Chemical mapping of a 177-nucleotide RNA with 2A3 and DMS. 2A3 adducts were read by reverse transcription with SuperScript II with manganese. DMS adducts were read by reverse transcription with MarathonRT. Source: RMDB library OK2TST, as collected in RNAgym. The RNA was probed in 150 mM KOAc, 10 mM MgCl2 and 150 mM bicine (pH 8.5) at 24 C.
RNA sequence: GGGAACGACUCGAGUAGAGUCGAAAACGGCCAUCGUCACUAACCGUGGCGGGCGAACCUGUCAUGCCGCCAUUAUUGCGCGUGAGUUAGGUAUUCCAGCGGUAGUGGGGUGCGGUAAUGCCACUGACCAUCCAACCACGUUCGCGUGGUUGGAUGGAAAAGAAACAACAACAACAAC
Reactivity to 2A3 in 0.01 (KOAc 150mM, MgCl2 10mM, bicine 150mM(pH8.5), 24C), signal-to-noise 3, nucleotides 027 to 126: c010g090g020c010c020a140u170c040g300u080c010a000c040u090a300a120c040c100g030u010g040g010c000g010g000g010c000g000a020a010c000c010u020g010u030c000a010u010g180c190c030g050c020c000a130u190u110a140u210u300g010c040g000c010g040u050g040a040g060u100u160a020g060g000u050a090u060u010c000c010a020g000c020g050g000u030a020g000u010g010g030g050g020u110g100c050g000g060u110a070a070u100g010c020c000a060c070u070g090a090
Reactivity to DMS in 0.01 (KOAc 150mM, MgCl2 10mM, bicine 150mM(pH8.5), 24C), signal-to-noise 1, nucleotides 027 to 126: c110g020g000c070c030a100u020c020g000u010c000a030c020u050a110a120c190c160g030u010g000g020c130g010g000g080c130g000a050a080c000c010u000g000u000c000a020u020g010c080c010g020c020c300a090u010u010a070u000u000g030c020g000c060g020u000g010a010g030u000u010a030g000g010u000a110u000u000c030c040a090g020c040g000g020u010a030g030u000g010g000g000g000u000g000c080g000g000u010a030a070u010g030c020c020a100c060u000g000a250